[RMDB]
RNA sequence: GGGAACGACUCGAGUAGAGUCGAAAAGCGCACCGAAUUAUCGCCAGUCCUGGCGGUUAGCGGGAGUGUGGCGGCGGGCGAUUAACCUGAUGACGGAAAGCGGCGAACUGUUAACGUUGCAUCGUCAAUACGAUAGAUAGUUCGCUAUCUAUCGUAUAAAAGAAACAACAACAACAAC
Reactivity to DMS in 0.01 (KOAc 150mM, MgCl2 10mM, bicine 150mM(pH8.5), 24C), signal-to-noise 9, nucleotides 027 to 126: g010c020g010c020a130c010c010g010a140a130u010u010a090u010c010g020c000c010a080g010u010c090c070u000g030g040c010g010g010u010u010a080g020c020g000g000g000a060g010u010g030u000g010g010c020g020g010c030g010g000g010c010g010a060u000u000a100a140c020c020u000g010a150u000g010a030c020g010g010a060a080a120g010c020g000g000c010g010a080a100c190u010g010u010u010a100a120c040g010u000u000g010c020a100u000c020g010u000c030a080
Reactivity to 2A3 in 0.01 (KOAc 150mM, MgCl2 10mM, bicine 150mM(pH8.5), 24C), signal-to-noise 9, nucleotides 027 to 126: g030c030g000c030a150c090c020g030a040a060u240u060a070u220c010g000c010c000a020g080u030c030c040u110g300g010c020g000g020u100u120a040g000c010g020g040g060a050g070u300g030u030g050g000c000g010g000c020g010g000g000c020g020a010u070u100a050a030c000c010u060g090a120u100g000a030c010g010g060a170a090a020g010c000g010g000c010g030a090a060c090u270g110u300u240a100a020c010g010u000u010g000c010a050u090c010g000u010c000a010